[RMDB]
RNA sequence: GGGAACGACUCGAGUAGAGUCGAAAAUUUUAUGUGAAUGCGCCCUAUGGAAUCGCCCUGGCACACAACGGUAAUUUGACCAAUACGCAAGAGCUGGCCGAGGAGAUGCGCCAGGUUGAUUUGCGUCCAGAAUGGACGUCUUCGGACGUCCAUUCUGAAAAGAAACAACAACAACAAC
Reactivity to DMS in 0.01 (KOAc 150mM, MgCl2 10mM, bicine 150mM(pH8.5), 24C), signal-to-noise 2, nucleotides 027 to 126: u000u000u000u020a110u010g000u010g000a100a100u000g000c130g010c010c010c100u000a110u000g000g000a050a040u000c100g000c290c010c000u000g000g020c030a040c040a030c080a100a130c060g000g000u000a070a100u000u010u000g000a100c050c040a030a090u010a060c080g000c040a000a070g010a210g010c030u000g010g000c010c030g030a120g000g030a160g010a140u010g020c080g020c000c010a010g000g000u010u000g000a090u000u000u000g000c070g000u010c240
Reactivity to 2A3 in 0.01 (KOAc 150mM, MgCl2 10mM, bicine 150mM(pH8.5), 24C), signal-to-noise 1, nucleotides 027 to 126: u050u090u090u060a150u100g030u050g110a130a060u030g060c010g010c060c000c040u010a090u100g080g040a020a050u040c010g010c000c050c010u000g030g000c030a030c010a010c000a070a170c000g030g010u060a090a110u060u000u140g040a000c010c020a000a080u110a090c020g030c050a080a020g020a020g110c040u060g020g000c010c000g020a050g040g140a160g040a080u070g020c030g000c020c000a000g040g000u010u030g040a080u030u000u060g020c010g040u010c010